[RMDB]
RNA sequence: GGGAACGACUCGAGUAGAGUCGAAAAUCCGAAGCGCUUUAGUGCCUUCCGUCCCCAAACCGCCAACAGCCAGGGCGGCCUCUCCCCGCGGUUUGUCAAAUGAUCCGCAGGGCCCGGAAGAGCCUUCCCGAUUGCAUUUUUUCGAAAAUGCAAUCGGAAAAGAAACAACAACAACAAC
Reactivity to 2A3 in 0.01 (KOAc 150mM, MgCl2 10mM, bicine 150mM(pH8.5), 24C), signal-to-noise 3, nucleotides 027 to 126: u020c020c010g030a120a050g050c090g040c090u080u160u220a080g030u140g150c000c000u040u030c010c010g070u080c010c000c000c030a050a060a040c000c030g020c040c030a040a040c020a110g050c030c030a030g020g020g040c000g000g000c020c010u000c000u040c000c010c000c000g000c020g020g000u010u040u110g030u040c000a000a050a150u240g020a010u050c000c000g010c020a040g000g000g030c000c040c000g010g010a010a000g030a020g020c000c000u020u040c000
Reactivity to DMS in 0.01 (KOAc 150mM, MgCl2 10mM, bicine 150mM(pH8.5), 24C), signal-to-noise 2, nucleotides 027 to 126: u020c020c030g010a060a050g000c130g000c020u000u020u020a050g010u050g000c110c000u000u000c010c020g010u020c030c010c000c030a080a030a210c010c000g000c010c030a070a140c120a100g020c070c160a120g020g010g040c020g000g000c070c010u000c120u000c000c000c010c060g060c010g010g010u000u010u000g010u030c210a080a120a120u020g010a040u000c000c000g000c030a110g000g010g010c260c200c010g010g040a040a060g010a070g040c010c000u020u030c090

Source information
The data come from the RNA Mapping Database (RMDB), library RFM100. Chemical mapping of a 177-nucleotide RNA with 2A3 and DMS. Reactivities are given for positions 27 through 126. 2A3 adducts were read by reverse transcription with SuperScript II with manganese.